[RMDB]
RNA sequence: GGGAACGACUCGAGUAGAGUCGAAAAGCGCGAAGUGACUUUGCGCGACGAAUUAUUUUUCAUCGCGCAAAAUGUGGUCGCGCAAGACUUUGAGUGACGAGUUUCAAGUUUCGUCGCGCAAAAUGACUUUGAGCAAAGUGACCCUUCGGGGUCACAACCCAGGAGAAAUGUUCGCAUUUCUCCUGGGAAAAGAAACAACAACAACAAC
Reactivity to 2A3 in 0.01 (KOAc 150mM, MgCl2 10mM, bicine 150mM(pH8.5), 24C), signal-to-noise 3, nucleotides 027 to 156: g020c020g000c010g000a010a010g060u070g220a040c020u000u000u000g000c000g010c010g000a000c010g000a010a020u210u070a170u100u270u050u020u040c050a060u030c020g010c000g010c000a010a000a000a060u200g030u070g100g000u030c010g000c010g000c000a000a000g030a010c060u080u060u060g020a030g040u020g030a070c020g020a010g010u050u100u260c180a160a070g040u080u040u000c040g000u000c010g010c010g010c000a000a010a020a070u130g040a080c050u130u130u180g030a040g010c030a020a090a080g000u000g000a000c000c000c000u000u020c170g020g000g000g000u000c000a000c000a000a000
This 207-nucleotide RNA was probed chemically with 2A3. Values cover nucleotides 27 to 156. The RNA was probed in 150 mM KOAc, 10 mM MgCl2 and 150 mM bicine (pH 8.5) at 24 C.